The record gives the reactivity of an RNA of 177 nucleotides to 2A3. The reactions ran in a buffer of 150 mM KOAc, 10 mM MgCl2 and 150 mM bicine (pH 8.5), at 24 C.

RNA sequence: GGGAACGACUCGAGUAGAGUCGAAAACUUAUUACCAAUUAUAGGUGGAACAGCUGUAACUAUAUCAUUUCUUUCAACAUUUAUUGGGAAAAUGUUAGCUACAUUUCUGUAUCCGAUUAAUAAUGUACGACAGCGUGCAAUUCGUUGCACGCUGUCGAAAAGAAACAACAACAACAAC
Reactivity to 2A3 in 0.01 (KOAc 150mM, MgCl2 10mM, bicine 150mM(pH8.5), 24C), signal-to-noise 1, nucleotides 027 to 126: c000u080u000a000u110u050a040c000c000a060a080u020u210a300u210a070g060g000u100g000g000a000a000c000a000g010c080u000g000u000a000a000c000u000a000u000a000u260c040a000u000u000u000c000u100u060u000c000a080a180c110a170u180u160u300a080u200u200g000g000g000a000a100a000a000u000g000u120u070a000g000c000u070a000c000a000u050u000u090c000u000g060u030a260u000c000c000g110a000u000u000a000a040u030a000a000u060g050u060a040
It was measured as part of the RMDB library OK1LIB.
For 2A3, 460 sequencing reads were counted.